Conditions: 150 mM KOAc, 10 mM MgCl2 and 150 mM bicine (pH 8.5), 24 C. An RNA of 207 nucleotides, treated with 2A3 and read out base by base. Values cover nucleotides 27 to 156.
RNA sequence: GGGAACGACUCGAGUAGAGUCGAAAAAAGGGCGCCGAAGUACACCCGUCCACCGAGUACUCCAGUGUUCACCACAAGCGUGACCUGACCCUCGUGCACAUGCACACAUUCAAGGAACUGUCGAAGCUGUACGCUCUCCCCGUAGGCCUCGGCAUCGCACACCAAUUGCAUUCGUGCAAUUGGUGUGAAAAGAAACAACAACAACAAC
Reactivity to 2A3 in 0.01 (KOAc 150mM, MgCl2 10mM, bicine 150mM(pH8.5), 24C), signal-to-noise 2, nucleotides 027 to 156: a020a010g030g000g010c050g010c110c020g080a080a010g060u060a000c030a050c070c020c030g020u040c030c020a080c060c060g000a030g000u000a020c000u040c070c010a030g030u030g000u170u090c010a030c060c000a050c060a260a030g060c100g080u030g040a090c000c010u090g070a130c020c000c000u100c090g040u070g000c010a150c030a250u220g000c000a020c000a020c020a110u200u190c100a170a100g130g000a140a070c080u020g000u000c030g020a000a000g000c010u090g020u300a000c000g000c020u120c080u160c030c020c010c000g020u020a020g010g000c000c000u000c000g000g000c000a010u070c010g000
Background:
The 2A3 profile rests on 938 reads.